[RMDB]
RNA sequence: GGGAACGACUCGAGUAGAGUCGAAAACCCAGGUCGGACCGCGGGGAGGUGGAGAUGCCAUGCCGACCCGAAGAGGAAAGGAAGGACACAGACGCGAACCGUGAGUGGAACCCUCGAUCCUUUAUUGAGCCCGAUCAGUUCGCUGAUCGGAAAAGAAACAACAACAACAAC
Reactivity to 2A3 in 0.01 (KOAc 150mM, MgCl2 10mM, bicine 150mM(pH8.5), 24C), signal-to-noise 9, nucleotides 027 to 129: c000c000c000a010g040g050u050c020g020g020a060c010c000g010c040g030g000g010g010a020g010g020u070g030g010a110g010a050u140g080c020c010a060u100g020c020c010g040a060c000c000c020g030a040a020g020a010g010g000a040a030a000g030g010a020a010g010g010a010c030a010c000a100g090a040c040g020c020g040a030a020c020c020g020u030g050a040g010u060g010g040a070a070c010c010c000u010c010g030a080u070c020c010u160u160u060a160u100u230g060a030g060c000
Reactivity to DMS in 0.01 (KOAc 150mM, MgCl2 10mM, bicine 150mM(pH8.5), 24C), signal-to-noise 9, nucleotides 027 to 129: c000c000c000a140g030g040u050c070g010g000a090c010c070g010c030g030g000g040g000a060g030g000u040g020g030a110g030a090u030g030c010c010a060u010g020c010c040g040a090c060c040c060g030a070a080g000a020g020g060a040a040a040g000g000a040a050g000g000a040c110a080c110a090g020a080c110g020c060g000a040a060c010c060g040u030g020a030g030u040g020g020a050a100c080c050c020u000c000g020a020u010c090c040u030u040u050a100u060u100g020a060g000c110